Chemical mapping of a 177-nucleotide RNA with DMS. Source: RMDB library M2PK90, as collected in RNAgym. The DMS profile rests on 1,191 reads. For DMS the reverse transcriptase was MarathonRT. The reactions ran in a buffer of 150 mM KOAc, 10 mM MgCl2 and 150 mM bicine (pH 8.5), at 24 C.
[RMDB]
RNA sequence: GGGAACGACUCGAGUAGAGUCGAAAAAAAAACCUUGAUGUGUAGGAUAGGUGGGAGGCUUUGAAGUGUGGACGCCAGUCUGCAUGGAGCCGACCUUGAAAUACCACCGUUAAAAACAAAAAAAAAAUCCAUCAAUAAGGUUCGCCUUAUUGAUGGAAAAAGAAACAACAACAACAAC
Reactivity to DMS in 0.01 (KOAc 150mM, MgCl2 10mM, bicine 150mM(pH8.5), 24C), signal-to-noise 2, nucleotides 027 to 126: a000a010a050a060a060c010c020u000u000g040a020u000g000u020g000u000a080g010g000a150u020a060g000g040u010g000g010g020a300g030g010c000u010u000u000g000a160a060g070u000g000u000g000g010a010c000g010c190c230a130g010u000c020u000g010c000a000u000g000g020a010g010c010c000g010a110c040c010u000u000g000a090a080a100u000a060c000c010a000c000c010g010u000u000a030a040a020a040a040c090a070a000a040a030a010a000a050a070a110a090